RNA sequence: GGGAACGACUCGAGUAGAGUCGAAAAAUACUUCUCAGGAUGGCGCGUUGCAGUCCAACAAGAUCCAGGGACUGUACAGAAUUUUCCUAUACCUCGAGUCGGGUUUGUAAUCUAAGGUUGACUCGCUAAAACUUUACGUGGUUCGCCACGUAAAGAAGAACAAUAUAGAGUUCGCUCUAUAUUGUUCAAAAGAAACAACAACAACAAC
Reactivity to 2A3 in 0.01 (KOAc 150mM, MgCl2 10mM, bicine 150mM(pH8.5), 24C), signal-to-noise 3, nucleotides 027 to 156: a000u070a040c020u010u030c030u010c010a030g050g000a030u030g030g050c010g000c060g160u130u060g000c010a010g010u000c010c000a040a030c050a120a120g130a210u100c050c060a020g000g030g010a000c000u000g020u010a010c030a020g110a140a110u040u050u060u070c000c010u060a080u080a150c010c040u010c040g000a000g000u010c030g040g030g000u040u080u060g070u060a070a100u020c080u090a100a080g050g000u040u030g020a040c010u000c040g000c030u040a060a060a010a040c000u000u000u000a000c000g000u000g000g030u020u070c100g030c050c000a000c000g000u000a000a000a000g000a000a020
Reactivity to DMS in 0.01 (KOAc 150mM, MgCl2 10mM, bicine 150mM(pH8.5), 24C), signal-to-noise 2, nucleotides 027 to 156: a130u000a040c060u000u000c050u000c050a200g040g010a070u000g000g020c100g020c150g020u000u010g010c020a080g030u010c070c020a110a160c050a070a250g000a070u010c050c020a170g030g000g000a020c040u010g010u010a100c090a150g010a120a090u000u000u000u000c000c020u000a160u010a060c070c030u000c010g010a020g020u000c030g010g000g000u010u000u000g010u000a080a090u010c060u000a060a100g010g020u000u000g010a070c050u000c040g000c060u000a030a070a140a130c000u000u000u010a010c000g010u000g010g000u000u000c300g020c030c000a010c000g040u000a000a000a010g000a030a060